[RMDB]
Record summary
Structure probing data (DMS and 2A3) for a 177-nucleotide construct. The RNA was probed in 150 mM KOAc, 10 mM MgCl2 and 150 mM bicine (pH 8.5) at 24 C. It was measured as part of the RMDB libraries RFM100 and RFMREP.
RNA sequence: GGGAACGACUCGAGUAGAGUCGAAAAUCUUUCCAUCAGCCGAUUUUGAAGUCACUGAUGGCUUAGAAUGGGAGAUAUUGUCAGGUCGAAUCUGAUAAAUGAUUCAUAAGCCCUAGUUUGUUGCAUCAGCAUCUAUUCAAUUCGUUGAAUAGAUGCUAAAAGAAACAACAACAACAAC
Reactivity to DMS in 0.01 (KOAc 150mM, MgCl2 10mM, bicine 150mM(pH8.5), 24C), signal-to-noise 6, nucleotides 027 to 126: u000c010u000u000u000c000c000a020u000c000a010g020c110c120g000a010u000u000u000u030g000a140a140g000u000c000a170c000u000g010a010u000g010g010c170u000u000a010g000a040a090u000g000g000g000a030g020a120u000a040u000u000g020u000c010a020g000g000u010c300g000a140a140u030c010u000g000a010u000a010a030a090u010g000a140u000u000c010a070u020a110a190g000c010c010c000u000a120g010u010u000u010g010u010u000g020c120a120u000c120
Reactivity to 2A3 in 0.01 (KOAc 150mM, MgCl2 10mM, bicine 150mM(pH8.5), 24C), signal-to-noise 3, nucleotides 027 to 126: u040c020u020u030u020c000c000a040u000c010a000g070c060c170g040a070u110u010u080u300g300a210a100g050u040c000a000c000u040g030a080u030g010g070c030u030u040a030g020a020a050u090g090g000g070a020g020a060u070a030u180u000g000u000c000a000g070g030u080c060g050a090a060u030c010u000g010a030u030a040a080a030u090g040a070u040u000c040a010u080a250a110g000c000c010c000u020a040g030u030u070u160g050u100u010g000c060a040u040c040